[RMDB]
RNA sequence: GGGAACGACUCGAGUAGAGUCGAAAAGAAGGGAAAGGAGAGCCAUGGACAGUCUCCAGAGGUUCCUAAGGCCUCGUUCGCGCCUGCAGGGAGGCAGAAUGUCCCGGUUGUCCAUGCAAGAAGAAGAACUACUAUCCUAGUUCGCUAGGAUAGUAGUAAAAGAAACAACAACAACAAC
Reactivity to 2A3 in 0.01 (KOAc 150mM, MgCl2 10mM, bicine 150mM(pH8.5), 24C), signal-to-noise 9, nucleotides 027 to 126: g070a020a030g080g010g030a090a060a060g060g020a050g000a010g060c050c010a030u050g000g010a000c010a050g050u020c010u020c050c020a010g010a020g040g020u090u120c020c000u080a070a070g060g000c000c020u040c020g060u060u070c050g010c040g010c030c040u070g010c060a060g030g040g040a010g000g020c010a010g060a080a060u110g020u040c010c000c000g010g010u020u020g040u000c010c010a010u060g020c040a040a050g060a050a000g050a040a010g040a140
Reactivity to DMS in 0.01 (KOAc 150mM, MgCl2 10mM, bicine 150mM(pH8.5), 24C), signal-to-noise 9, nucleotides 027 to 126: g010a100a070g000g000g000a050a070a080g000g000a090g000a100g010c140c040a040u010g000g000a020c030a090g000u000c030u010c030c030a100g000a080g000g010u010u010c030c110u030a090a090g010g010c000c020u010c050g020u020u010c090g020c100g000c070c040u020g010c080a110g010g010g010a050g010g010c020a080g010a070a080u020g010u000c020c010c090g000g000u020u010g000u000c020c020a040u010g010c150a110a080g000a100a070g020a120a100g010a110
About this RNA
An RNA of 177 nucleotides, treated with 2A3 and DMS and read out base by base.